[RMDB]
RNA sequence: GGGAACGACUCGAGUAGAGUCGAAAAAAUGUAUGGCAGAUUCAAACUAUCCAGGAUUCAGAUGGUACAAAUAAGCAGUUGAAUGAGAUAUCUGAUGAUUGUAACUGGCCACUAGUUAUUAUUGCAACAGUGCUAUUCCAUUCGUGGAAUAGCACUGAAAAGAAACAACAACAACAAC
Reactivity to 2A3 in 0.01 (KOAc 150mM, MgCl2 10mM, bicine 150mM(pH8.5), 24C), signal-to-noise 1, nucleotides 027 to 126: a000a000u150g040u030a070u060g060g000c010a010g050a060u080u000c030a040a110a100c030u040a050u300c000c000a030g010g000a040u050u020c000a010g030a070u030g000g020u110a070c050a080a080a040u230a180a070g080c000a020g020u130u180g160a060a050u060g020a040g030a110u090a010u080c020u010g030a010u020g000a000u060u120g020u080a070a000c000u000g050g000c010c020a090c010u010a000g040u030u040a050u040u070a050u000u130g020c010a070a020
Reactivity to DMS in 0.01 (KOAc 150mM, MgCl2 10mM, bicine 150mM(pH8.5), 24C), signal-to-noise 3, nucleotides 027 to 126: a020a040u000g010u000a050u010g000g020c020a060g000a070u010u030c120a110a070a030c070u000a080u010c040c040a100g010g010a120u010u000c040a010g000a050u000g000g010u010a060c070a060a050a130u000a110a120g030c100a040g000u000u000g000a090a130u020g020a120g000a160u010a040u000c010u010g000a070u000g000a160u000u010g010u000a030a100c030u000g000g010c100c060a020c110u000a040g000u010u000a030u000u010a040u000u010g010c110a060a140
This 177-nucleotide RNA was probed chemically with 2A3 and DMS. The reactions ran in a buffer of 150 mM KOAc, 10 mM MgCl2 and 150 mM bicine (pH 8.5), at 24 C. For DMS the reverse transcriptase was MarathonRT. For 2A3, 937 sequencing reads were counted. It was measured as part of the RMDB library OK2TRN. For DMS, 1,706 sequencing reads were counted.